The record gives the reactivity of an RNA of 177 nucleotides to DMS and 2A3.
For DMS the reverse transcriptase was MarathonRT.
It was measured as part of the RMDB library OK2TRN.
RNA sequence: GGGAACGACUCGAGUAGAGUCGAAAAAUAACGUUUAUAUAUUCUAGAUCAGGAUCGAUAGCCGAAGUCGCUUUGGUCUUGUCCGUAUGAACGUCUCGGUCUCAGGAACUAUAAAAGCUAGAAUGUAGCAUAUACUCCUAUUCGUAGGAGUAUAUGCAAAAGAAACAACAACAACAAC
Reactivity to DMS in 0.01 (KOAc 150mM, MgCl2 10mM, bicine 150mM(pH8.5), 24C), signal-to-noise 5, nucleotides 027 to 126: a090u000a090a060c030g000u000u000u010a050u000a030u010a080u020u000c030u000a030g000a100u010c030a020g000g000a020u000c010g000a040u010a030g020c020c050g010a110a120g020u010c140g010c040u000u000u000g010g010u000c010u000u000g010u000c100c080g000u000a030u010g010a020a010c020g010u000c080u000c110g010g010u000c020u000c060a120g010g000a050a070c140u000a080u000a050a070a070a110g000c050u000a020g000a030a050u010g010u010a150
Reactivity to 2A3 in 0.01 (KOAc 150mM, MgCl2 10mM, bicine 150mM(pH8.5), 24C), signal-to-noise 4, nucleotides 027 to 126: a000u080a020a020c010g000u010u040u010a110u010a010u000a010u040u070c020u030a010g000a090u080c000a010g040g010a010u020c010g060a040u090a060g000c040c040g240a180a030g110u200c070g030c030u000u020u050g000g000u000c000u020u010g020u000c030c030g040u070a050u070g010a020a000c010g040u000c050u030c070g080g030u000c020u000c020a030g040g020a030a020c060u040a040u080a300a110a040a020g040c010u010a010g020a070a030u080g030u090a020